The record gives the reactivity of an RNA of 177 nucleotides to DMS and 2A3. For 2A3, 1,473 sequencing reads were counted. For DMS, 1,926 sequencing reads were counted. The reactions ran in a buffer of 150 mM KOAc, 10 mM MgCl2 and 150 mM bicine (pH 8.5), at 24 C. Source: RMDB library OK1LIB, as collected in RNAgym. 2A3 adducts were read by reverse transcription with SuperScript II with manganese.
RNA sequence: GGGAACGACUCGAGUAGAGUCGAAAAGGGUUGGUCAUCAGGGCCUCAAGCGGAUCGAUAUCGGGCGCCCGCGGGAUUUCCACCAGGCCGCCGCCCAGCCGUCUGACCGGCGGGCGCACCCGGCUGGCCUAACCGAAUGGUUCGCCAUUCGGUUAGGAAAAGAAACAACAACAACAAC
Reactivity to DMS in 0.01 (KOAc 150mM, MgCl2 10mM, bicine 150mM(pH8.5), 24C), signal-to-noise 1, nucleotides 027 to 126: g000g020g010u020u000g020g020u000c000a060u000c060a050g000g040g000c040c010u030c150a070a180g010c080g000g000a060u010c070g010a080u030a100u020c030g020g010g020c040g000c070c000c030g100c030g020g000g030a190u010u040u000c060c090a180c110c060a050g020g000c020c090g020c040c010g030c010c010c030a070g000c000c050g000u030c070u000g000a070c050c010g010g050c000g000g000g020c000g040c080a010c050c020c000g020g000c050u000g010g000
Reactivity to 2A3 in 0.01 (KOAc 150mM, MgCl2 10mM, bicine 150mM(pH8.5), 24C), signal-to-noise 1, nucleotides 027 to 126: g060g030g000u070u060g030g050u030c020a110u020c030a070g050g040g020c020c000u060c090a110a040g040c030g060g010a070u080c020g040a040u080a050u280c010g020g020g020c000g000c000c000c030g000c030g030g000g020a060u060u040u040c020c030a070c010c000a000g020g010c000c000g000c000c000g010c000c000c010a010g000c020c000g020u030c050u110g040a140c080c000g050g000c000g010g020g000c000g050c020a060c000c010c000g000g000c040u030g020g000